[RMDB]
RNA sequence: GGGAACGACUCGAGUAGAGUCGAAAACGACGCUAGAGCUGAAAUUCUUGGACCGUCGUAAGACUACCUUAAGCGAAAGCAUUUGCCAAAGAUGUUUUCAUUAAUCAAGAACGAAAGUUAGAGGUUCCGCGUCAUUCCUAUUCGUAGGAAUGACGCGAAAAGAAACAACAACAACAAC
Reactivity to 2A3 in 0.01 (KOAc 150mM, MgCl2 10mM, bicine 150mM(pH8.5), 24C), signal-to-noise 1, nucleotides 027 to 126: c000g030a000c000g000c020u000a020g030a040g020c100u180g120a010a000a080u110u030c000u020u070g080g080a050c020c020g000u010c000g000u000a000a010g110a000c060u040a060c060c020u030u060a040a030g080c000g160a020a020a020g010c000a000u010u020u020g090c040c020a060a060a060g030a000u060g060u000u000u000u020c030a050u070u120a040a010u110c050a000a050g050a020a000c060g060a120a080a030g020u070u140a030g010a060g150g010u000u000c020